[RMDB]
Chemical mapping of a 207-nucleotide RNA with 2A3. The RNA was probed in 150 mM KOAc, 10 mM MgCl2 and 150 mM bicine (pH 8.5) at 24 C. The data come from the RNA Mapping Database (RMDB), library M2RFPK. 2A3 adducts were read by reverse transcription with SuperScript II with manganese.
RNA sequence: GGGAACGACUCGAGUAGAGUCGAAAAAGACGGAAACCCAACGACUGUCACCAGAUGCUGCAUCACCUGAUCACUGAUGGCUCAACGGUAUCCGGCGGUACAACUGAAUACUUGUAGCUGCCUUUUGAAAAGGAGUUCAUCUUCGGAUGAACUCCAAGGCUCUUAAAUACUUCGGUAUUUAAGAGCCAAAAGAAACAACAACAACAAC
Reactivity to 2A3 in 0.01 (KOAc 150mM, MgCl2 10mM, bicine 150mM(pH8.5), 24C), signal-to-noise 3, nucleotides 027 to 156: a000g030a020c070g040g000a030a110a060c000c020c000a030a000c060g110a030c030u040g010u070c040a050c050c000a060g030a090u090g040c050u040g050c030a060u020c000a050c010c010u020g060a060u080c020a010c040u010g020a010u020g040g030c030u040c070a050a040c100g000g030u040a060u060c070c040g010g000c000g010g030u020a020c010a030a010c030u120g070a140a100u130a130c040u030u050g010u060a050g100c020u040g020c030c000u130u110u080u200g090a090a090a020a050g000g000a000g000u000u010c000a000u010c020u030u110c140g090g000a000u000g000a010a000c000u000c000c000a000a000